[RMDB]
RNA sequence: GGGAACGACUCGAGUAGAGUCGAAAAGAUAUGGAUGUUGAUGAUCGACGAUCCGUAACAUCGUUCGGAAACGAACGUGGGGGAGAUCGCAACAUCCUAAGUCGAACCUCGUGCUUCGGCACGAGAAGAUUUCCAUAGAGUUCGCUCUAUGGAAAUCAAAAGAAACAACAACAACAAC
Reactivity to DMS in 0.01 (KOAc 150mM, MgCl2 10mM, bicine 150mM(pH8.5), 24C), signal-to-noise 6, nucleotides 027 to 126: g000a020u000a180u000g000g000a010u000g010u000u000g010a050u010g010a010u000c010g000a100c270g010a020u000c010c010g010u010a060a160c180a070u010c020g010u000u000c000g020g000a050a030a080c010g000a000a010c000g020u000g010g000g000g010g010a030g000a010u000c000g010c010a010a010c000a010u000c000c000u000a000a080g010u000c000g000a100a160c110c010u000c000g040u000g000c010u000u010c200g030g020c000a000c010g000a010g000a050a070
Reactivity to 2A3 in 0.01 (KOAc 150mM, MgCl2 10mM, bicine 150mM(pH8.5), 24C), signal-to-noise 7, nucleotides 027 to 126: g000a000u020a010u080g010g000a010u000g010u010u010g050a260u060g000a000u030c010g300a300c020g000a080u020c030c030g020u100a080a090c050a300u180c030g000u010u000c010g000g010a030a020a010c000g000a000a000c010g000u050g000g000g000g000g000a030g000a010u000c010g000c020a000a000c000a000u010c000c000u000a040a000g010u010c010g010a040a050c010c000u000c010g000u000g000c010u070u120c300g160g000c000a000c010g000a000g000a020a030

The record gives the reactivity of an RNA of 177 nucleotides to DMS and 2A3. DMS adducts were read by reverse transcription with MarathonRT. Values cover nucleotides 27 to 126. 2A3 adducts were read by reverse transcription with SuperScript II with manganese. The reactions ran in a buffer of 150 mM KOAc, 10 mM MgCl2 and 150 mM bicine (pH 8.5), at 24 C. It was measured as part of the RMDB library TTRDEL. For 2A3, 26,919 sequencing reads were counted.